[RMDB]
RNA sequence: GGGAACGACUCGAGUAGAGUCGAAAAAGGCAUAUGAUUACUGUAAACAUGAUCGGAUAAAUAUCCUGACGGAUAGCUUACUGUCCAGUCUUCUUCAAUUCGUGUUCCGCUCCGAUCAUACGUCCGAAUUAUAUCACUCGUUCGCGAGUGAUAUAAUAAAAGAAACAACAACAACAAC
Reactivity to 2A3 in 0.01 (KOAc 150mM, MgCl2 10mM, bicine 150mM(pH8.5), 24C), signal-to-noise 5, nucleotides 027 to 126: a000g070g000c060a050u050a040u110g050a040u060u150a090c080u110g070u210a020a130a010c020a030u010g010a000u030c040g020g000a020u050a140a250a010u130a040u040c020c030u020g020a020c040g000g000a010u010a020g020c060u080u150a130c020u050g020u000c010c010a070g020u010c030u130u020c000u080u050c040a090a200u080u080c040g040u040g050u100u010c060c030g010c040u000c020c030g000a000u010c010a000u020a030c040g030u000c020c020g030a030
Reactivity to DMS in 0.01 (KOAc 150mM, MgCl2 10mM, bicine 150mM(pH8.5), 24C), signal-to-noise 6, nucleotides 027 to 126: a060g010g010c060a060u000a050u000g010a080u010u000a100c120u010g010u010a090a060a070c100a040u000g000a020u000c110g010g000a040u000a080a080a100u000a070u010c030c030u000g010a070c120g000g000a020u000a020g020c270u000u000a070c050u010g010u000c030c020a120g020u000c020u000u000c100u000u000c110a060a130u010u000c060g030u010g010u000u000c040c050g010c090u000c070c050g010a020u000c000a010u000a050c140g010u010c010c040g010a170